[RMDB]
Overview: The record gives the reactivity of an RNA of 177 nucleotides to 2A3 and DMS. It was measured as part of the RMDB library OK2TRN. DMS adducts were read by reverse transcription with MarathonRT. Reactivities are given for positions 27 through 126. For 2A3, 2,083 sequencing reads were counted. Values are in units of 0.01, from 0 to 300, in steps of 10. The reactions ran in a buffer of 150 mM KOAc, 10 mM MgCl2 and 150 mM bicine (pH 8.5), at 24 C. For DMS, 1,536 sequencing reads were counted.
RNA sequence: GGGAACGACUCGAGUAGAGUCGAAAAAGCAACUUGCUCACAUGCGCAUGACCUGCGCCCGUACAGCUCCGUGGCUUCUCAGCCGCCGGUCAAGUAUGAGCCAAACCCGGUCUAUGAGGGCGUGCGCCAACAGCUACGGGUUCGCCCGUAGCUGUUGAAAAGAAACAACAACAACAAC
Reactivity to 2A3 in 0.01 (KOAc 150mM, MgCl2 10mM, bicine 150mM(pH8.5), 24C), signal-to-noise 2, nucleotides 027 to 126: a000g060c050a040a180c090u250u250g000c040u060c040a130c010a110u150g000c000g000c030a010u050g020a150c020c030u010g000c040g020c000c000c000g070u040a020c010a030g020c010u030c010c030g030u030g000g010c000u180u080c120u080c100a020g010c000c010g050c030c140g000g040u010c010a040a080g000u030a060u110g000a020g000c000c000a000a110a100c010c010c000g040g020u000c100u120a150u150g100a110g000g010g000c000g040u010g040c000g000c000
Reactivity to DMS in 0.01 (KOAc 150mM, MgCl2 10mM, bicine 150mM(pH8.5), 24C), signal-to-noise 2, nucleotides 027 to 126: a020g010c060a090a110c110u020u010g040c030u000c060a090c140a050u020g010c000g000c000a030u000g000a090c060c000u000g020c240g010c010c010c010g020u000a030c070a120g000c140u000c030c050g020u010g000g000c010u050u000c170u000c300a060g010c030c030g030c100c040g020g020u000c130a250a140g010u000a000u000g000a060g000c010c020a030a060a110c030c030c040g010g000u000c080u020a080u020g010a090g000g010g010c010g020u000g000c030g020c040